[RMDB]
RNA sequence: GGGAACGACUCGAGUAGAGUCGAAAAUGUUUUCAUACUUGAUGAUCUUCAUUGACAUCGGUAUUUUUAUCUUCUACAAGCUUUUUAGACGGACUAAGUUCAAGAGGGCUGCAGAGGUUGAUUUAGUGACUGGUCUUAAGGAGGUUGAAGAGCACGACCUAAAUACGCAGUUCGCUGCGUAUUUAGGAAAAGAAACAACAACAACAAC
Reactivity to DMS in 0.01 (KOAc 150mM, MgCl2 10mM, bicine 150mM(pH8.5), 24C), signal-to-noise 1, nucleotides 027 to 156: u000g000u000u000u000u000c100a070u000a030c010u000u000g050a030u000g000a160u000c010u000u000c200a140u000u000g020a070c000a000u000c000g010g020u020a000u000u000u000u000u000a060u020c070u010u000c000u000a130c050a100a120g010c050u000u050u000u010u020a110g020a080c040g030g010a200c090u000a050a130g010u000u000c060a030a100g010a080g000g010g040c040u000g010c010a110g000a080g040g030u000u000g000a120u000u010u000a040g020u000g010a120c050u000g000g030u000c080u000u000a060a050g000g010a050g050g030u000u000g040a040a090g000a010g030c050a070c070g000a160
Reactivity to 2A3 in 0.01 (KOAc 150mM, MgCl2 10mM, bicine 150mM(pH8.5), 24C), signal-to-noise 3, nucleotides 027 to 156: u110g030u020u050u060u100c020a020u020a020c020u190u300g040a060u070g040a180u040c010u170u090c090a220u170u300g000a010c000a000u010c000g020g020u000a020u070u050u040u020u060a080u050c050u110u000c030u040a100c030a150a090g070c030u150u070u120u250u250a040g040a030c030g020g000a000c010u030a050a030g040u050u070c020a050a020g020a030g080g010g000c040u060g000c040a010g050a020g110g000u040u050g000a050u030u030u110a030g010u000g050a030c050u050g000g020u000c000u060u050a060a040g020g010a010g030g000u020u000g030a020a020g020a050g030c020a030c070g030a010